[RMDB]
RNA sequence: GGGAACGACUCGAGUAGAGUCGAAAAGCACGUACGGUACAGUGAUCCGCUAGAGUACCUCAUGAGUACCGUCGUACAGUACACAUGCGAUCUAGCUAGCACACCAUGGAGCUGCCAUGACUCAUGCAUUGCAGGAGAAGUUCGCUUCUCCUGCAAUAAAAGAAACAACAACAACAAC
Reactivity to 2A3 in 0.01 (KOAc 150mM, MgCl2 10mM, bicine 150mM(pH8.5), 24C), signal-to-noise 2, nucleotides 027 to 126: g070c020a010c040g040u210a010c050g000g040u080a050c030a060g040u050g040a100u050c040c050g060c100u110a030g010a010g080u120a160c020c030u000c000a060u040g070a020g030u000a000c000c000g020u030c030g010u050a050c010a040g050u050a010c060a000c010a020u060g020c020g010a020u000c010u000a010g030c040u020a040g030c020a010c010a030c070c000a060u080g040g000a070g040c030u030g030c020c000a070u120g030a040c000u030c100a020u090g010c050
Reactivity to DMS in 0.01 (KOAc 150mM, MgCl2 10mM, bicine 150mM(pH8.5), 24C), signal-to-noise 4, nucleotides 027 to 126: g020c050a020c080g010u010a050c080g000g000u010a030c050a300g010u000g000a070u010c090c110g010c080u010a030g010a090g000u010a070c100c060u000c060a050u000g000a090g020u000a010c020c040g010u010c180g010u000a170c070a060g030u000a040c050a070c060a070u000g020c110g020a060u000c030u000a060g000c020u010a090g010c030a060c070a060c070c030a060u000g000g000a130g010c050u010g010c050c030a070u020g010a120c070u000c030a050u010g040c170